Annotation: The record gives the reactivity of an RNA of 207 nucleotides to 2A3 and DMS. The RNA was probed in 150 mM KOAc, 10 mM MgCl2 and 150 mM bicine (pH 8.5) at 24 C. For 2A3, 2,430 sequencing reads were counted. The DMS profile rests on 1,697 reads. Reactivities are given for positions 27 through 156.
[RMDB]
RNA sequence: GGGAACGACUCGAGUAGAGUCGAAAAAGUCGUUUUCAUCUCCUGCCCAUCACGGGCAGGGCUGGGGCAGCCUUCAGCCAUGAGGCUCAACAGCCCAGCUACAAAGUCCACGACGACAAUUACUCUAGGGGUGGAAACAUGAAAAUCGGGAAAAUUGCUUACUAGACGUUUUCGAACGUCUAGUAAGAAAAGAAACAACAACAACAAC
Reactivity to 2A3 in 0.01 (KOAc 150mM, MgCl2 10mM, bicine 150mM(pH8.5), 24C), signal-to-noise 3, nucleotides 027 to 156: a000g060u050c010g000u050u020u030u050c030a060u020c040u010c000c000u000g010c010c000c000a120u210c110a070c170g010g000g000c000a010g000g000g010c000u000g000g000g020g070c060a020g000c000c010u100u140c070a080g060c080c010a090u150g020a010g000g000c020u040c080a060a180c030a110g040c000c010c000a000g000c000u060a060c040a050a130a030g010u000c040c010a050c110g090a020c010g000a000c070a040a140u150u100a070c060u060c070u170a040g000g040g000g000u010g000g000a030a050a010c030a030u100g060a050a050a020a040u140c050g010g040g050a000a040a080a080u130u140g020
Reactivity to DMS in 0.01 (KOAc 150mM, MgCl2 10mM, bicine 150mM(pH8.5), 24C), signal-to-noise 1, nucleotides 027 to 156: a030g070u000c020g000u020u000u050u000c030a130u000c110u000c050c010u000g010c000c020c000a270u030c150a170c260g000g000g000c030a020g000g010g070c000u000g000g020g000g040c180a060g010c000c030u000u000c030a040g040c070c060a220u020g000a140g030g000c000u000c030a030a060c040a200g030c000c000c000a030g050c010u000a120c040a130a080a210g060u010c060c040a100c050g010a190c090g000a090c040a120a170u000u000a100c060u000c050u020a060g000g010g020g000u000g010g000a050a010a100c050a060u000g000a070a060a050a050u000c040g000g030g000a090a050a110a210u020u000g010